An RNA of 207 nucleotides, treated with DMS and 2A3 and read out base by base. Reactivities are rounded to 0.1 and cut off at 0 and 3. The 2A3 profile rests on 6,860 reads. Reactivities are given for positions 27 through 156. For DMS the reverse transcriptase was MarathonRT. The RNA was probed in 150 mM KOAc, 10 mM MgCl2 and 150 mM bicine (pH 8.5) at 24 C.

RNA sequence: GGGAACGACUCGAGUAGAGUCGAAAAUCUUGAGGGUGUCAGCCACCUUGGCGGCGAUGCCCUGGAGCGGCUUAGGCACCUCGGCGUGGGUCUUGAGGUGAUCCACAACCUCGGACAGCUUACGGCCUGACAGGCUGUGCAGCUCGUCGCCGAAGGCUCUCUAGCUAAAUUUCGAUUUAGCUAGAGAAAAAGAAACAACAACAACAAC
Reactivity to DMS in 0.01 (KOAc 150mM, MgCl2 10mM, bicine 150mM(pH8.5), 24C), signal-to-noise 2, nucleotides 027 to 156: u000c040u010u000g020a040g010g020g060u010g020u000c020a130g000c010c010a040c010c040u010u000g000g020c070g020g020c040g020a070u010g010c040c000c000u000g000g000a060g030c050g010g010c020u010u000a100g020g010c020a050c000c000u010c040g010g020c020g020u010g010g030g000u000c010u000u000g050a070g020g030u010g000a050u000c050c080a080c070a190a030c010c000u020c000g010g020a040c030a110g000c020u000u000a070c010g000g000c000c000u000g000a180c160a160g000g030c020u000g030u000g010c090a040g000c000u010c050g020u000c010g020c000c010g000a040a070g020g020c070
Reactivity to 2A3 in 0.01 (KOAc 150mM, MgCl2 10mM, bicine 150mM(pH8.5), 24C), signal-to-noise 6, nucleotides 027 to 156: u070c040u060u130g090a040g020g040g010u020g020u030c030a030g000c010c000a030c050c030u030u090g040g000c040g030g040c110g120a110u190g010c000c000c010u010g000g000a060g090c080g040g000c040u120u200a110g030g030c030a040c080c010u010c000g000g000c010g000u050g030g050g000u020c000u080u300g030a040g000g010u030g010a080u010c000c000a030c010a040a010c000c000u000c000g010g000a020c000a010g000c000u020u030a010c020g020g000c010c000u060g070a080c070a100g010g010c000u010g000u030g040c030a010g000c010u030c090g120u060c010g030c010c010g030a040a020g050g010c020